RNA sequence: GGGAACGACUCGAGUAGAGUCGAAAACAACUGUUAUCUUGCCACUGCAUUGUUAACACUCCAACAAAUAGAGUUGAAGUUUAAUCCACCUGCUCUACAAAGGGCUGGUGUAGCUGCUAACUUUUGUCAUAUUCUGUAUCUUCGGAUACAGAAUAUGAAAAGAAACAACAACAACAAC
Reactivity to 2A3 in 0.01 (KOAc 150mM, MgCl2 10mM, bicine 150mM(pH8.5), 24C), signal-to-noise 2, nucleotides 027 to 126: c010a000a030c030u040g030u160u050a070u090c050u030u050g060c010c060a100c060u130g000c020a050u130u000g030u060u020a030a030c010a020c050u000c030c020a050a020c010a050a220a110u230a070g070a010g020u020u030g030a030a000g020u020u060u220a100a040u070c030c000a000c000c000u010g020c000u010c000u060a140c100a080a220a010g020g020g000c000u000g000g000u010g000u010a020g000c020u050g030c010u040a030a050c000u000u110u110u140g080u020
Reactivity to DMS in 0.01 (KOAc 150mM, MgCl2 10mM, bicine 150mM(pH8.5), 24C), signal-to-noise 3, nucleotides 027 to 126: c050a090a090c130u000g000u000u000a060u000c060u000u000g000c020c150a140c130u000g010c070a030u000u010g000u000u000a030a030c110a060c050u000c010c040a030a030c030a070a110a130u030a100g000a070g000u000u000g020a040a010g010u000u010u000a070a060u010c150c000a010c020c010u000g010c010u010c000u010a120c300a050a070a060g000g000g010c000u000g000g000u000g000u010a040g010c070u000g020c140u010a040a050c050u000u000u000u010g010u000
This 177-nucleotide RNA was probed chemically with 2A3 and DMS. For 2A3 the reverse transcriptase was SuperScript II with manganese. Conditions: 150 mM KOAc, 10 mM MgCl2 and 150 mM bicine (pH 8.5), 24 C. The data come from the RNA Mapping Database (RMDB), library 15KREP. DMS adducts were read by reverse transcription with MarathonRT.